About this RNA: Structure probing data (2A3) for a 177-nucleotide construct.

RNA sequence: GGGAACGACUCGAGUAGAGUCGAAAAUAUUAGGGUGUGAGAGUAUCUCUCUCCCAGCCGGUUCGCGCAGCCAUCUUUUUCGACUUUACUUGGGUUAGCUGCGCGAACUGGCUGGCGUUCCCAGCAAGUCGUUUGAAUAGUUCGCUAUUCAAACGACAAAAGAAACAACAACAACAAC
Reactivity to 2A3 in 0.01 (KOAc 150mM, MgCl2 10mM, bicine 150mM(pH8.5), 24C), signal-to-noise 1, nucleotides 027 to 126: u100a020u080u090a040g000g020g000u020g000u000g020a000g000a000g040u300a300u100c040u030c000u000c000u020c080c020c000a000g000c000c010g000g000u020u000c000g000c000g030c020a000g000c020c030a140u060c140u000u150u040u060u080c030g030a040c000u160u220u180a130c010u130u190g050g000g000u060u060a000g000c010u000g000c010g000c000g020a000a010c000u000g000g000c010u010g030g000c000g000u000u000c000c000c000a000g060c000a000a060